Notes
Chemical mapping of a 177-nucleotide RNA with 2A3 and DMS. The 2A3 profile rests on 27,373 reads. The data come from the RNA Mapping Database (RMDB), library TTRDEL. The reactions ran in a buffer of 150 mM KOAc, 10 mM MgCl2 and 150 mM bicine (pH 8.5), at 24 C. For 2A3 the reverse transcriptase was SuperScript II with manganese. DMS adducts were read by reverse transcription with MarathonRT.
RNA sequence: GGGAACGACUCGAGUAGAGUCGAAAAGAUAUGGAAUCAUUAAGACAUGAGCGAUCGGAAACGAUCGUAUCAACAGCUUACUGUGAUUCCUAAGUCAAAGACGAUAAAUCUUCGGAUUUAUCGUCAAUCAAUGUCAUUACUUCGGUAAUGACAUUGAAAAAGAAACAACAACAACAAC
Reactivity to 2A3 in 0.01 (KOAc 150mM, MgCl2 10mM, bicine 150mM(pH8.5), 24C), signal-to-noise 8, nucleotides 027 to 126: g010a000u030a020u080g000g000a010a000u010c010a000u040u110a040a020g210a300c140a220u070g000a010g000c010g010a000u000c000g000g020a030a010a010c000g010a000u010c010g000u030a300u020c000a000a090c030a080g100c010u030u040a060c080u110g020u020g060a000u000u000c000c000u010a030a000g010u000c040a140a070a090g010a000c000g000a000u030a010a000a010u000c020u050u110c300g080g000a000u000u000u000a010u000c000g000u000c000a000a000
Reactivity to DMS in 0.01 (KOAc 150mM, MgCl2 10mM, bicine 150mM(pH8.5), 24C), signal-to-noise 9, nucleotides 027 to 126: g010a030u000a210u000g000g010a010a000u000c000a010u000u000a010a020g010a150c130a150u000g010a050g000c000g000a010u000c010g010g000a040a060a090c010g000a010u000c000g010u000a030u000c010a020a120c300a120g000c010u000u000a020c300u000g010u000g000a010u000u000c000c000u000a020a120g010u000c030a070a110a090g000a010c000g000a000u000a000a010a010u000c000u000u010c240g020g000a010u000u000u000a000u000c000g010u000c000a020a040